[RMDB]
RNA sequence: GGGAACGACUCGAGUAGAGUCGAAAAUGUCCCAGUUUCGACUGGGACAAAAGCAUGAGGAGGAUCAAAGAUCAAAGCCGUCGCUCAUGCGUAAAGACGCCAAAAGGCUAGUGUUCGCACUAGCCAACUUCUGUCAUGACUUCGGUCAUGACAGAAGAAAAGAAACAACAACAACAAC
Reactivity to 2A3 in 0.01 (KOAc 150mM, MgCl2 10mM, bicine 150mM(pH8.5), 24C), signal-to-noise 1, nucleotides 027 to 126: u050g030u000c000c000c010a020g000u030u030u120c180g100a000c010u000g020g000g000a000c000a000a010a000a000g010c010a000u010g010a000g050g020a010g060g000a020u070c110a200a150a130g080a090u090c050a060a080a000g100c050c020g160u080c050g100c040u000c000a020u010g010c000g020u030a000a000a010g070a010c070g120c060c010a000a040a000a100g000g000c010u010a000g000u010g010u090u090c220g040c070a010c000u020a010g010c000c000a000a000
Reactivity to DMS in 0.01 (KOAc 150mM, MgCl2 10mM, bicine 150mM(pH8.5), 24C), signal-to-noise 1, nucleotides 027 to 126: u030g040u000c000c000c000a020g010u020u000u000c170g050a020c000u000g000g000g020a000c010a000a010a180a160g000c000a000u000g000a020g000g000a190g000g000a130u010c070a180a110a130g020a030u000c130a030a120a080g050c070c020g000u000c050g000c010u000c010a000u000g000c010g020u010a040a010a090g000a080c100g000c020c210a030a080a100a050g010g010c000u000a000g000u000g020u010u000c170g000c000a010c020u000a000g050c000c000a010a010
Background:
Structure probing data (2A3 and DMS) for a 177-nucleotide construct. Source: RMDB library M2PK50, as collected in RNAgym. The 2A3 profile rests on 1,184 reads.